[RMDB]
RNA sequence: GGGAACGACUCGAGUAGAGUCGAAAAUUCUAUGUACGCCCAUGUGCACUGUGUGCAGGUGUGUGGGGAUGUGUGUGUGCAGGUCUGUGUGUGCAGUUGUGUGUGCAGACAUGCAUGUGUGUGCAGGUGUGUGUGCAGGUGUGCGUGUGUAGACAAAACCCUAUGGGUGAUUCGUCACCCAUAGGGUAAAAGAAACAACAACAACAAC
Reactivity to 2A3 in 0.01 (KOAc 150mM, MgCl2 10mM, bicine 150mM(pH8.5), 24C), signal-to-noise 2, nucleotides 027 to 156: u040u000c030u010a000u010g010u020a010c000g000c030c070c000a040u130g080u000g080c000a000c000u060g030u020g050u110g200c080a110g090g000u020g030u020g030u040g050g000g000g000a070u030g100u010g010u010g020u020g010u030g120c010a010g020g030u010c020u000g010u010g040u000g040u010g050c050a180g020u250u200g010u020g010u000g040u010g010c000a000g000a020c000a010u020g010c000a040u070g030u020g030u020g030u000g040c000a050g070g000u050g010u050g000u000g010u040g090c010a030g060g000u000g000u020g040c020g000u040g000u000g000u010a020g050a020c060a010a070a010